[RMDB]
RNA sequence: GGGAACGACUCGAGUAGAGUCGAAAAGUCGCGAAAGCAUUCAUGCAGCGUUGCAAGGACAAAGGAAUGCACAUUGGCAGUUAUAGCAUGGAUCAGCACAAUGGCGAACGAGGCAGCGAAAAUUUCAUCCCUCCUUUUACUUCGGUAAAAGGAGGGAAAAAGAAACAACAACAACAAC
Reactivity to 2A3 in 0.01 (KOAc 150mM, MgCl2 10mM, bicine 150mM(pH8.5), 24C), signal-to-noise 1, nucleotides 027 to 126: g030u000c050g040c040g110a010a010a020g020c020a050u030u050c020a010u050g050c020a010g020c040g190u160u010g030c020a030a030g170g000a070c070a040a120a010g200g020a060a020u100g110c020a040c000a070u060u080g010g050c020a000g060u040u200a110u100a080g030c040a030u080g060g030a050u080c050a040g030c020a010c040a130a020u110g100g000c010g020a010a020c010g010a100g110g000c040a000g020c040g050a030a030a050a090u100u090u030c010a070
Reactivity to DMS in 0.01 (KOAc 150mM, MgCl2 10mM, bicine 150mM(pH8.5), 24C), signal-to-noise 3, nucleotides 027 to 126: g020u020c030g000c030g000a100a060a100g030c030a070u000u020c050a060u020g020c020a130g000c120g000u020u010g020c060a070a090g020g000a120c090a040a120a120g020g020a070a030u000g010c010a140c090a080u000u000g000g020c050a050g000u020u000a060u010a050g000c010a030u030g000g020a040u000c070a060g000c030a030c100a080a090u010g000g020c060g000a020a040c080g010a080g010g000c060a040g000c050g010a030a030a030a070u010u000u010c090a110
Background
An RNA of 177 nucleotides, treated with 2A3 and DMS and read out base by base. It was measured as part of the RMDB library OK2TRN. For 2A3, 897 sequencing reads were counted.